[RMDB]
RNA sequence: GGGAACGACUCGAGUAGAGUCGAAAAGAUAUGGAUUUGUGAACCAUUGAGUCGGUGGUCGGAAACGACCAUGCGACAAUGAUGUGGUUACCAAAUCCUAAGUCAAACUUGGCCUUCGGGCCAAGAACUGCUAUCACAUGUUCGCAUGUGAUAGCAGAAAAGAAACAACAACAACAAC
Reactivity to DMS in 0.01 (KOAc 150mM, MgCl2 10mM, bicine 150mM(pH8.5), 24C), signal-to-noise 2, nucleotides 027 to 126: g020a060u010a300u040g010g000a000u000u000u010g030u000g010a010a010c020c000a000u000u000g020a180g000u000c020g020g030u000g000g000u000c000g000g020a060a130a180c000g000a010c020c000a000u000g000c020g010a030c000a100a110u000g000a100u010g000u000g030g010u010u000a050c140c010a000a020a010u000c000c000u000a040a100g010u000c030a120a120a210c000u000u000g030g010c000c000u000u000c280g040g010g020c010c000a000a000g000a090a210
Reactivity to 2A3 in 0.01 (KOAc 150mM, MgCl2 10mM, bicine 150mM(pH8.5), 24C), signal-to-noise 1, nucleotides 027 to 126: g040a010u060a030u170g010g010a000u010u000u040g190u170g020a000a000c010c010a030u030u130g050a020g000u000c020g000g010u000g010g010u000c040g000g040a050a070a040c000g020a020c000c010a000u160g280c000g030a000c000a010a100u140g040a050u140g010u010g050g070u010u020a200c010c000a000a000a000u000c020c000u020a050a030g040u000c070a060a100a100c030u000u010g010g030c010c010u050u080c300g110g020g000c000c000a000a000g000a000a010